Chemical mapping of a 207-nucleotide RNA with 2A3. 2A3 adducts were read by reverse transcription with SuperScript II with manganese. The RNA was probed in 150 mM KOAc, 10 mM MgCl2 and 150 mM bicine (pH 8.5) at 24 C. For 2A3, 798 sequencing reads were counted.
RNA sequence: GGGAACGACUCGAGUAGAGUCGAAAACUGGUUUAAGUGGCUUCUCCUGGGCGAUCGCUCGCUGUUUUUGUGGCUGGCUUUCAGCGGGCUGGAGGAGCCGGGAGCGGAGGCGGAGGACCGAGCCAAAGAUGCUAUGUUCACUUCGGUGAACAUAGAAGUUAGUGUACGAGUUCGCUCGUACACUAACAAAAGAAACAACAACAACAAC
Reactivity to 2A3 in 0.01 (KOAc 150mM, MgCl2 10mM, bicine 150mM(pH8.5), 24C), signal-to-noise 1, nucleotides 027 to 156: c010u020g000g190u050u050u240a170a120g070u130g040g020c030u010u000c020u000c000c010u100g050g100g060c070g070a060u150c110g010c000u000c010g000c020u040g040u010u080u040u090u120g050u040g080g010c110u040g010g000c000u010u040u010c000a000g000c000g000g000g020c010u020g000g040a000g010g000a010g000c000c010g010g000g000a000g010c000g000g070a040g030g030c060g000g050a050g040g000a040c050c030g040a010g040c030c010a000a110a010g080a040u180g060c000u000a020u000g010u030u000c000a000c010u040u000c160g060g000u000g000a000a000c010a000u000a000g000a020a000